Description: Chemical mapping of a 177-nucleotide RNA with 2A3 and DMS. Conditions: 150 mM KOAc, 10 mM MgCl2 and 150 mM bicine (pH 8.5), 24 C. High 2A3 reactivity points to a flexible backbone, as in loops and unpaired stretches. The DMS profile rests on 10,498 reads. DMS adducts were read by reverse transcription with MarathonRT.
RNA sequence: GGGAACGACUCGAGUAGAGUCGAAAAGAUAUGGAUAUCAUAGGGAGCUCUGUCGGAAACGAUUGAGCGAGGAUCUAUAUAUCCUAAGUCAAACGGAACUUACAUCCUUCGGGAUGUAAGUUCCGAAUCAAUAUCUUUGGUUCGCCAAAGAUAUUGAAAAAGAAACAACAACAACAAC
Reactivity to 2A3 in 0.01 (KOAc 150mM, MgCl2 10mM, bicine 150mM(pH8.5), 24C), signal-to-noise 3, nucleotides 027 to 126: g040a020u070a040u190g000g000a000u000a000u060c160a010u050a060g000g010g030a020g000c010u000c020u040g020u010c020g000g040a060a070a060c010g010a000u030u050g010a000g000c000g000a070g000g000a010u010c010u000a000u000a000u000a000u020c000c000u030a110a040g060u050c050a090a040a070c010g000g000a000a000c000u010u000a000c000a010u010c000c000u060u160c300g080g000g000a000u000g000u000a000a000g000u000u000c000c000g000a000a000
Reactivity to DMS in 0.01 (KOAc 150mM, MgCl2 10mM, bicine 150mM(pH8.5), 24C), signal-to-noise 6, nucleotides 027 to 126: g000a030u000a300u000g000g000a020u000a010u000c180a010u000a010g000g000g010a050g020c000u000c000u010g020u000c000g010g000a100a090a160c000g000a020u000u000g000a010g020c000g010a030g010g010a030u010c000u000a000u000a010u000a000u010c000c000u010a040a100g010u000c030a090a110a250c020g010g000a020a000c000u000u000a000c000a000u000c000c000u000u010c230g030g000g020a010u000g010u000a000a000g000u000u000c000c000g000a010a030